[RMDB]
RNA sequence: GGGAACGACUCGAGUAGAGUCGAAAACAAACAAGAAACUCGCCAAAAGCGAGUAGGAUCCUCUGGCAUUGAACUGAAGACAGAGGAUCCAGCGAGCAAAAAGCUCGCAUUCAGUUCAAUGCCGAAACGCAUACCUGAGCUUCGGCUCAGGUAUGCGAAAAGAAACAACAACAACAAC
Reactivity to 2A3 in 0.01 (KOAc 150mM, MgCl2 10mM, bicine 150mM(pH8.5), 24C), signal-to-noise 1, nucleotides 027 to 126: c060a040a030a030c060a000a020g250a230a080a000c010u000c000g050c000c000a000a000a160a000g020c000g000a000g000u000a010g000g150a000u060c020c000u090c160u230g000g050c000a000u000u000g000a010a010c000u000g060a100a000g030a030c080a010g060a150g260g000a000u020c000c000a000g010c040g000a000g030c000a010a120a210a040a000g000c000u000c000g000c030a000u090u020c010a030g000u000u060c000a000a020u000g020c000c000g000a000a000a010